RNA sequence: GGGAACGACUCGAGUAGAGUCGAAAACGUGAAGCAAAAGAAGGAGAUGAAGGAGGUGAUGAUGAGGGAGAAUUUGUUGAUUGGCGGUCAAAUUCAGAGGGUCGGCAUCCUCCUUUCCCUGAUCGUAAUGAAAUCUUGAGCGGCGAAAGGUCACGAGAAUCCGUUCCAAAUUCGUUUGGAACGGAUUAAAAGAAACAACAACAACAAC
Reactivity to DMS in 0.01 (KOAc 150mM, MgCl2 10mM, bicine 150mM(pH8.5), 24C), signal-to-noise 2, nucleotides 027 to 156: c060g000u010g030a060a070g020c060a060a060a060a150g020a090a100g010g000a100g020a090u000g010a130a060g020g010a070g000g000u000g010a060u020g010a050u020g010a090g000g000g010a100g060a090a110u000u000u010g010u000u000g000a140u010u000g030g030c040g030g000u010c040a040a020a060u000u060c300a080g010a110g010g020g020u000c020g020g040c050a120u000c000c000u000c000c010u000u000u000c020c020c000u000g010a060u000c070g030u000a060a070u000g010a050a030a110u000c050u000u010g010a090g020c040g030g020c050g020a060a060a050g020g000u010c070a040c040g000a140g000
Reactivity to 2A3 in 0.01 (KOAc 150mM, MgCl2 10mM, bicine 150mM(pH8.5), 24C), signal-to-noise 4, nucleotides 027 to 156: c020g030u030g080a020a010g050c040a060a080a010a040g040a030a020g050g010a060g010a050u080g030a020a030g010g010a010g010g050u040g020a040u020g000a000u040g020a070g020g050g010a070g040a050a050u110u080u080g050u040u050g040a110u030u070g030g000c040g000g030u050c060a110a070a040u080u040c010a020g030a070g060g030g020u030c010g020g030c050a020u030c000c020u030c000c000u030u040u010c020c000c000u020g030a050u050c010g010u050a060a110u090g060a070a040a040u020c070u080u080g030a030g060c020g010g000c030g020a080a040a010g030g000u070c050a040c090g070a090g070
Notes
Conditions: 150 mM KOAc, 10 mM MgCl2 and 150 mM bicine (pH 8.5), 24 C. An RNA of 207 nucleotides, treated with DMS and 2A3 and read out base by base. Reactivities are given for positions 27 through 156. Source: RMDB library OK3TST, as collected in RNAgym.